[RMDB]
RNA sequence: GGGAACGACUCGAGUAGAGUCGAAAAGAUAUGGAGACGACAUGCUCAGGGUGGGCCGAGUCGGAAACGAUAUCCCACCCAGGAGCAACAGCGUCUCCUAAGUCAAACGGGCGGUUCGCCGCCCGAAGAAUUAAUAAAGGUUCGCCUUUAUUAAUUCAAAAGAAACAACAACAACAAC
Reactivity to 2A3 in 0.01 (KOAc 150mM, MgCl2 10mM, bicine 150mM(pH8.5), 24C), signal-to-noise 2, nucleotides 027 to 126: g050a020u080a040u150g000g000a000g000a010c020g020a040c020a130u090g000c000u030c020a030g020g010g000u000g010g000g000c140c130g070a090g050u010c000g000g000a040a050a020c020g010a020u020a050u090c000c000c000a010c000c000c000a020g070g030a010g000c000a010a010c060a000g030c000g010u030c000u000c000c000u000a010a000g030u000c020a020a070a160c020g000g000g030c010g020g060u030u060c260g000c140c010g000c010c030c000g000a000a010
Reactivity to DMS in 0.01 (KOAc 150mM, MgCl2 10mM, bicine 150mM(pH8.5), 24C), signal-to-noise 4, nucleotides 027 to 126: g010a020u000a300u010g000g010a010g010a040c010g010a060c120a190u000g010c000u000c010a100g000g000g020u000g000g010g040c300c170g000a110g010u000c000g010g000a080a080a120c010g000a020u000a090u000c000c000c000a020c010c010c000a040g010g010a010g010c000a020a070c210a140g000c010g000u000c010u000c000c000u000a010a080g000u000c050a090a110a220c030g000g000g030c000g000g010u000u010c180g010c010c000g020c000c000c000g010a020a050